[RMDB]
RNA sequence: GGGAACGACUCGAGUAGAGUCGAAAAGCUGCUGGACCGCGCCCAUGCGAAGUUCCUUCGACGAGUCGAGUUGUUUGGGAAUGCAGCUCUAAGUGGGUGGUAAAUUUCAUCUAAAGCUAAAUAUUGGAGGAUGAAAGCUUUUCGAAGCUUUCAUCCUAAAAGAAACAACAACAACAAC
Reactivity to 2A3 in 0.01 (KOAc 150mM, MgCl2 10mM, bicine 150mM(pH8.5), 24C), signal-to-noise 2, nucleotides 027 to 126: g030c030u060g000c000u010g040g000a070c050c040g000c030g020c000c000c020a020u080g010c000g040a020a000g050u070u140c050c000u020u000c020g010a020c030g000a050g170u020c000g070a030g010u010u010g040u060u000u070g040g010g010a070a000u100g000c000a020g010c000u000c040u020a120a070g050u060g030g030g000u000g010g030u080a100a160a130u080u110u120c060a020u010c020u080a120a040a000g000c080u070a040a070a040u250a130u070u130g030g030
Reactivity to DMS in 0.01 (KOAc 150mM, MgCl2 10mM, bicine 150mM(pH8.5), 24C), signal-to-noise 2, nucleotides 027 to 126: g020c010u000g040c050u000g000g000a090c030c050g030c080g010c000c000c010a030u000g000c140g060a050a070g000u030u000c090c050u020u000c000g000a170c060g020a080g000u000c020g000a060g000u000u000g000u010u000u020g000g000g000a080a080u020g000c080a020g000c050u000c050u000a050a060g030u010g000g000g110u000g030g020u000a040a100a240u010u040u030c010a000u040c040u000a080a080a120g030c020u020a050a200a060u030a090u040u030g010g020